The data come from the RNA Mapping Database (RMDB), library M2RFPK. Structure probing data (DMS and 2A3) for a 207-nucleotide construct. Values cover nucleotides 27 to 156.
RNA sequence: GGGAACGACUCGAGUAGAGUCGAAAAGGUGCUCUGAAUGGAGUGCUCUACUGAGAUUAUAAAAUAGAAGGUAAGCUAUUAUCUAUUACAACAGGGCAGGGCUUGUUGGAAUAGGCGGUAAAGUCUAAAAACUACCUCACCUUCGGGUGAGGUAGAACUUCUAACAAUGGUUCGCCAUUGUUAGAAGAAAAGAAACAACAACAACAAC
Reactivity to DMS in 0.01 (KOAc 150mM, MgCl2 10mM, bicine 150mM(pH8.5), 24C), signal-to-noise 1, nucleotides 027 to 156: g010g010u000g000c030u000c020u020g050a060a180u000g000g020a090g050u000g000c010u010c020u000a080c060u000g000a190g000a150u000u010a160u000a060a090a050a140u000a080g010a160a170g000g000u000a090a150g020c050u030a070u000u010a090u010c020u020a060u000u010a090c020a020a120c000a070g000g000g000c070a110g000g020g030c020u000u000g020u000u050g030g010a020a110u010a020g020g000c050g030g000u020a050a030a170g010u000c050u050a050a040a080a070a080c010u000a010c000c020u000c000a010c000c000u000u000c300g030g020g020u000g010a000g010g050u000a000g000a010a050
Reactivity to 2A3 in 0.01 (KOAc 150mM, MgCl2 10mM, bicine 150mM(pH8.5), 24C), signal-to-noise 3, nucleotides 027 to 156: g050g000u020g000c000u000c010u050g150a150a050u190g000g020a020g020u030g010c000u030c030u020a060c050u050g060a020g030a150u120u120a070u240a210a070a130a060u140a050g010a060a020g040g020u040a050a000g020c010u020a080u160u040a080u180c010u000a020u050u080a070c020a090a010c000a020g020g010g040c000a030g020g060g000c030u020u050g020u010u000g010g000a050a070u050a030g010g030c000g060g000u120a000a050a000g000u010c020u090a050a100a010a030a010c000u000a000c000c000u000c000a000c000c020u030u050c200g050g020g000u010g000a000g000g000u000a010g000a000a000
The 2A3 profile rests on 1,726 reads.
The reactions ran in a buffer of 150 mM KOAc, 10 mM MgCl2 and 150 mM bicine (pH 8.5), at 24 C.
The DMS profile rests on 1,760 reads.